[RMDB]
RNA sequence: GGGAACGACUCGAGUAGAGUCGAAAAUUGAAUGAACCAGCUUGGGUAUUAGCAUCGUACAUGCAGGCUGCGGCCUCAUCGUUCCGCAGCUGAACGAUAUUACGACCCCAGCGAUUAGUGGUGACUUUAGCUCUCUGGGGCUGCUCCUUUAGUGCGCCCGGACAAGAAUAUUCGUAUUCUUGUCCGGAAAAGAAACAACAACAACAAC
Reactivity to 2A3 in 0.01 (KOAc 150mM, MgCl2 10mM, bicine 150mM(pH8.5), 24C), signal-to-noise 4, nucleotides 027 to 156: u070u050g030a010a030u030g020a030a010c000c010a010g000c010u010u010g000g010g010u040a050u110u070a080g050c020a000u000c010g040u070a050c060a200u170g100c070a030g070g000c000u000g000c000g000g050c010c040u190c050a200u140c090g130u220u040c000c000g010c000a010g000c000u000g010a030a000c000g010a000u020a050u070u060a050c150g020a030c000c000c000c010a020g000c030g070a040u070u140a090g090u070g010g000u010g020a010c020u040u070u070a020g020c010u000c010u000c040u090g010g000g010g050c010u040g010c000u060c010c010u080u120u140a040g000u040g020c010g010c010
Reactivity to DMS in 0.01 (KOAc 150mM, MgCl2 10mM, bicine 150mM(pH8.5), 24C), signal-to-noise 2, nucleotides 027 to 156: u000u000g010a160a100u000g000a120a040c030c000a120g040c020u010u000g010g030g020u000a070u000u000a120g020c080a060u000c030g000u000a080c100a070u010g080c100a180g030g000c020u000g010c040g030g000c070c040u010c280a020u020c030g000u000u010c000c020g040c000a070g010c010u000g000a040a110c050g010a070u000a100u000u000a030c030g020a070c020c000c000c040a030g010c020g000a110u010u000a060g000u010g030g010u000g010a070c070u000u000u000a090g020c040u000c020u000c050u010g010g030g000g030c010u000g000c030u000c000c020u010u010u010a110g030u010g000c040g020c110
Structure probing data (2A3 and DMS) for a 207-nucleotide construct.
The RNA was probed in 150 mM KOAc, 10 mM MgCl2 and 150 mM bicine (pH 8.5) at 24 C.
The DMS profile rests on 4,824 reads.
For 2A3 the reverse transcriptase was SuperScript II with manganese.
The data come from the RNA Mapping Database (RMDB), library OK3TST.